RNA sequence: GGGAACGACUCGAGUAGAGUCGAAAAAUAACUUCAGUAACAUUAUUAAGUUGUUAGGACCAUUGAGGUCUUUAGUAACUGAUAUCGAAAUGGCUAUGACAAGUGGUCUAUUGAGCUUGUUAUCAGAACUUGGACGUGAAUUCGUUCACGUCCAAGUAAAAGAAACAACAACAACAAC
Reactivity to 2A3 in 0.01 (KOAc 150mM, MgCl2 10mM, bicine 150mM(pH8.5), 24C), signal-to-noise 3, nucleotides 027 to 126: a000u190a080a110c020u030u100c040a060g080u090a100a070c000a030u060u100a030u070u110a300a000g000u000u000g000u000u000a000g010g000a000c000c000a010u020u300g160a130g040g020u010c000u080u010u000a000g000u020a040a000c030u060g160a020u050a080u180c080g070a000a120a250u300g000g000c000u000a000u000g000a000c000a030a040g000u000g050g050u000c020u090a210u020u300g000a060g000c030u010u020g060u160u050a120u140c100a000g090a030
Reactivity to DMS in 0.01 (KOAc 150mM, MgCl2 10mM, bicine 150mM(pH8.5), 24C), signal-to-noise 4, nucleotides 027 to 126: a110u010a090a090c090u020u000c000a150g000u000a050a050c120a070u020u030a100u040u020a100a020g010u000u000g000u000u000a030g000g000a020c000c000a190u040u030g030a160g010g010u000c000u010u010u030a020g040u010a010a000c020u020g010a060u040a140u030c130g000a040a020a050u030g010g000c020u000a020u000g000a030c070a020a020g000u000g000g000u010c010u010a190u020u000g010a060g020c080u000u000g000u000u000a030u000c060a010g000a130

Annotation
The record gives the reactivity of an RNA of 177 nucleotides to 2A3 and DMS. The data come from the RNA Mapping Database (RMDB), library OK1LIB.